Source information: An RNA of 177 nucleotides, treated with 2A3 and DMS and read out base by base. Source: RMDB library TTRDEL, as collected in RNAgym. The reactions ran in a buffer of 150 mM KOAc, 10 mM MgCl2 and 150 mM bicine (pH 8.5), at 24 C.
RNA sequence: GGGAACGACUCGAGUAGAGUCGAAAAGUAAUCUAUGGAUAUGGACUGACCUACUUGUCAGCUGGUCUAUCGGAAACGAUAGAACAGCUUGGAUUUAGUAGGCAAUGGUCCUAAGUCGAGCCGCAAAGGACUCUAUACUGUUCGCAGUAUAGAGUCCAAAAGAAACAACAACAACAAC
Reactivity to 2A3 in 0.01 (KOAc 150mM, MgCl2 10mM, bicine 150mM(pH8.5), 24C), signal-to-noise 2, nucleotides 027 to 126: g090u090a060a200u030c090u100a130u220g100g030a120u050a050u230g000g000a020c020u060g240a210c020c010u020a020c010u000u010g010u010c020a010g000c000u000g000g000u010c010u000a000u000c000g000g050a080a030a030c010g000a000u010a010g000a020a020c010a000g000c000u000u070g000g000a000u210u170u290a010g000u000a000g020g000c010a000a010u140g010g000u000c000c000u020a020a000g010u010c010g000a000g040c040c010g130c210a210a040a000
Reactivity to DMS in 0.01 (KOAc 150mM, MgCl2 10mM, bicine 150mM(pH8.5), 24C), signal-to-noise 2, nucleotides 027 to 126: g020u000a100a090u000c020u000a040u000g000g010a050u010a160u020g010g020a030c000u000g030a120c000c020u000a010c000u000u000g000u010c000a020g000c000u000g010g010u000c000u000a000u000c000g000g000a160a090a240c010g020a020u000a000g010a020a010c000a010g000c010u000u010g020g010a010u000u010u000a000g000u000a010g000g010c080a070a040u010g000g000u000c010c000u000a030a060g000u000c020g000a080g000c010c020g030c160a100a100a140
2A3 adducts were read by reverse transcription with SuperScript II with manganese. High 2A3 reactivity points to a flexible backbone, as in loops and unpaired stretches.